An RNA of 207 nucleotides, treated with DMS and read out base by base. High DMS reactivity at an A or C suggests that its Watson-Crick edge is free. Values cover nucleotides 27 to 156.

[RMDB]
RNA sequence: GGGAACGACUCGAGUAGAGUCGAAAAUCCUAAGUCCUCGCGUUGAAAUUGAGGAAACGCCAUUGGUGGAGAACCUCGGAAACGAGGUUCGUUGAAACCAAUGAAGCUAAGCUCAAUGGAGCGAGGAUAUGGAAAAAUCGCAACUUCGGUUGCGAAAGUAUAAGCAACACUUCGGUGUUGCUUAUACAAAAGAAACAACAACAACAAC
Reactivity to DMS in 0.01 (KOAc 150mM, MgCl2 10mM, bicine 150mM(pH8.5), 24C), signal-to-noise 2, nucleotides 027 to 156: u000c000c010u000a070a230g030u000c010c000u000c000g020c000g010u000u040g000a190a210a020u000u000g010a020g010g010a230a030a050c040g030c000c000a030u000u000g010g020u010g010g010a120g010a000a020c010c010u000c020g000g020a100a090a090c000g010a010g040g000u000u000c010g030u010u000g000a300a300a060c000c000a030a020u000g010a100a160g000c010u000a180a300g030c000u010c000a000a030u010g010g000a140g050c020g030a030g010g020a000u000a030u020g000g020a070a080a080a140a130u010c010g000c000a010a040c000u010u000c300g020g030u010u000g010c010g000a010a030a090